Record summary
An RNA of 177 nucleotides, treated with 2A3 and DMS and read out base by base. The RNA was probed in 150 mM KOAc, 10 mM MgCl2 and 150 mM bicine (pH 8.5) at 24 C. DMS adducts were read by reverse transcription with MarathonRT. For 2A3 the reverse transcriptase was SuperScript II with manganese. Source: RMDB library OK2TST, as collected in RNAgym.
RNA sequence: GGGAACGACUCGAGUAGAGUCGAAAAAGGCUUUCCCAGGAUUUCAGAAUCUGGGUCGGGGUUUCCUCCACGCCUUCAUAGAAAUCCGGUAUGGUGAUGCGCCCGGUUUCAUCGUGCAGGUCGGCCACAAAAUUACGAUAUUCGUAUCGUAAUUUUGAAAAGAAACAACAACAACAAC
Reactivity to 2A3 in 0.01 (KOAc 150mM, MgCl2 10mM, bicine 150mM(pH8.5), 24C), signal-to-noise 4, nucleotides 027 to 126: a000g050g010c030u030u050u030c000c010c020a020g030g020a030u070u140u120c060a060g110a210a120u040c060u150g010g010g050u070c030g020g000g020g010u010u120u110c010c020u030c010c010a040c020g050c000c000u060u070c060a090u060a120g040a020a040a000u020c010c020g020g030u080a090u070g020g010u050g020a060u030g000c020g040c000c020c010g010g000u020u040u030c020a040u040c030g030u010g010c020a010g020g030u020c000g020g020c010c010a050
Reactivity to DMS in 0.01 (KOAc 150mM, MgCl2 10mM, bicine 150mM(pH8.5), 24C), signal-to-noise 7, nucleotides 027 to 126: a070g000g010c040u000u000u000c010c000c010a170g010g000a030u000u000u010c080a130g010a130a070u000c100u000g000g000g010u000c110g020g000g000g010u010u010u010c100c030u000c030c030a080c120g010c020c020u000u000c090a060u000a130g010a020a030a040u000c010c020g010g020u000a050u010g010g010u000g000a060u000g010c060g010c080c020c030g010g010u000u000u000c030a060u000c040g020u000g000c040a070g000g010u000c060g010g010c010c050a180
For 2A3, 7,136 sequencing reads were counted.